[RMDB]
RNA sequence: GGGAACGACUCGAGUAGAGUCGAAAACCUGGCCGGGGUUGAAGCGUUAAAACUAAGCGGCCUCGCCUUUAUCUACCGUGUUUGUCCGGGAUUUAAAGGUUAAUUAAAUGACAAUACUAAACAUGUAGUACCGACGGUCGAGGCUUUUCGGACGGGGGUACUAAACAGCCUUCGGGCUGUUUAGUACAAAAGAAACAACAACAACAAC
Reactivity to 2A3 in 0.01 (KOAc 150mM, MgCl2 10mM, bicine 150mM(pH8.5), 24C), signal-to-noise 1, nucleotides 027 to 156: c000c000u000g010g050c020c000g000g120g060g000u050u050g120a100a040g100c130g090u150u110a120a020a070a120c060u120a190a040g160c010g000g010c000c000u000c050g000c000c000u010u000u000a000u000c000u010a010c000c000g010u010g010u070u040u000g040u000c020c000g010g000g010a010u000u010u020a010a000a000g000g000u050u060a000a060u130u130a030a040a080u160g010a010c010a050a070u150a130c040u220a070a150a000c060a070u200g120u160a090g020u030a100c020c080g030a020c010g040g010u050c060g020a030g000g130c000u010u060u060u060c010g010g020a000c010g000g000g000g040
Structure probing data (2A3) for a 207-nucleotide construct. It was measured as part of the RMDB library RSTRND.